Conditions: 150 mM KOAc, 10 mM MgCl2 and 150 mM bicine (pH 8.5), 24 C. Structure probing data (DMS and 2A3) for a 177-nucleotide construct.

RNA sequence: GGGAACGACUCGAGUAGAGUCGAAAAUCGAUGGCGUUCGCGCCAUCGAAGAGCCGUACCGCGUAGCACGCGGAUAGGAGUCAAGAUAUCCAAGGCCAUGGAGGAGGCGUGCUUUCGAGCACGCCAACAUAAUACUGCUGUUCGCAGCAGUAUUAUGAAAAGAAACAACAACAACAAC
Reactivity to DMS in 0.01 (KOAc 150mM, MgCl2 10mM, bicine 150mM(pH8.5), 24C), signal-to-noise 9, nucleotides 027 to 126: u000c010g010a010u000g000g010c000g040u000u010c220g030c020g020c000c000a010u000c000g010a010a050g000a100g010c010c000g010u000a210c010c010g000c020g010u000a140g010c100a300c030g010c030g010g010a100u000a050g010g010a080g000u000c080a100a080g010a100u010a080u000c010c020a040a070g000g010c020c040a110u010g000g000a070g000g010a170g010g010c000g010u000g010c000u000u000u010c150g010a020g010c000a010c000g000c000c010a010a050
Reactivity to 2A3 in 0.01 (KOAc 150mM, MgCl2 10mM, bicine 150mM(pH8.5), 24C), signal-to-noise 9, nucleotides 027 to 126: u020c000g000a000u010g000g010c020g020u060u060c270g000c010g010c090c000a000u000c000g000a000a010g010a020g030c010c020g040u110a080c010c010g000c010g040u030a050g110c190a030c110g010c010g010g010a010u120a040g030g010a010g030u060c070a060a040g030a160u100a060u110c010c010a020a040g070g000c020c020a050u090g060g010a040g030g080a060g000g010c010g000u010g000c010u110u090u120c230g060a010g000c000a000c000g000c000c000a000a000